[RMDB]
RNA sequence: GGGAACGACUCGAGUAGAGUCGAAAAGAUGAUUAGUUCGCUAAUCAUCAAAGAACGCUGCAACGCGCAGAGAGCGCGCGAGAGCGAGAAUGCGCCAAGAAAAAAGUUACGGGUUCGCCCGUAACAAGUCUUUAUCGGAGUUCGCUCCGAUAAAGACAAAAGAAACAACAACAACAAC
Reactivity to DMS in 0.01 (KOAc 150mM, MgCl2 10mM, bicine 150mM(pH8.5), 24C), signal-to-noise 2, nucleotides 027 to 126: g010a010u010g000a000u000u000a000g020u000u010c190g070c010u000a000a000u000c010a010u000c020a050a110a070g020a220a130c020g000c020u000g000c050a250a020c020g000c010g010c010a230g020a180g020a190g020c010g000c010g020c050g020a260g020a010g000c010g010a090g000a080a130u010g010c100g040c040c030a080a180g020a010a030a120a070a120a140g000u000u000a010c000g000g000g030u000u000c220g000c000c010c010g020u010a000a000c010a110a050
Reactivity to 2A3 in 0.01 (KOAc 150mM, MgCl2 10mM, bicine 150mM(pH8.5), 24C), signal-to-noise 1, nucleotides 027 to 126: g000a000u000g000a000u010u000a010g010u040u070c110g020c100u010a000a010u000c000a000u010c010a000a000a010g080a060a000c000g020c010u020g000c000a010a010c000g000c020g000c060a000g220a030g060a030g300c010g010c000g000c020g030a060g020a010g030c050g000a030g020a050a060u090g010c110g050c020c030a050a040g090a070a130a000a000a010a020g020u010u010a000c000g020g000g040u030u060c270g010c060c000c000g000u000a000a000c000a000a000